This 177-nucleotide RNA was probed chemically with DMS and 2A3. It was measured as part of the RMDB library OK2TRN. The DMS profile rests on 2,294 reads. For DMS the reverse transcriptase was MarathonRT.

RNA sequence: GGGAACGACUCGAGUAGAGUCGAAAAGCAGUAGGGAAUCUUCCGCAAUGGACGAAAGUCUGACGGAGCAACGCCGCGUGAGCGAAGAAGGCCUUCGGGUCGUAAAGCUCUGUUGUCAGGGAAGAACCCAAUCGCAUCGAUUCGUCGAUGCGAUUGGAAAAGAAACAACAACAACAAC
Reactivity to DMS in 0.01 (KOAc 150mM, MgCl2 10mM, bicine 150mM(pH8.5), 24C), signal-to-noise 3, nucleotides 027 to 126: g000c070a090g000u000a140g010g010g010a140a120u000c010u000u000c000c010g010c160a110a060u020g010g000a020c000g010a090a090a140g010u000c010u000g020a070c010g010g010a060g010c030a090a070c150g010c070c010g000c110g000u000g000a110g010c010g000a080a100g000a100a250g000g000c010c000u000u000c180g020g000g040u000c000g000u000a040a070a300g000c000u000c000u000g010u000u020g010u000c170a100g010g010g000a020a010g000a060a170c080
Reactivity to 2A3 in 0.01 (KOAc 150mM, MgCl2 10mM, bicine 150mM(pH8.5), 24C), signal-to-noise 1, nucleotides 027 to 126: g040c060a020g060u200a080g000g000g060a130a210u010c020u010u020c020c050g110c090a070a140u160g020g000a010c000g080a100a010a020g000u000c000u010g060a040c010g050g000a000g000c020a120a030c070g030c030c030g060c050g090u080g090a060g020c020g030a070a060g090a040a030g060g000c000c000u000u000c130g070g000g020u000c020g000u000a010a010a010g010c000u000c030u000g060u050u070g110u080c110a090g130g000g050a020a000g010a050a050c020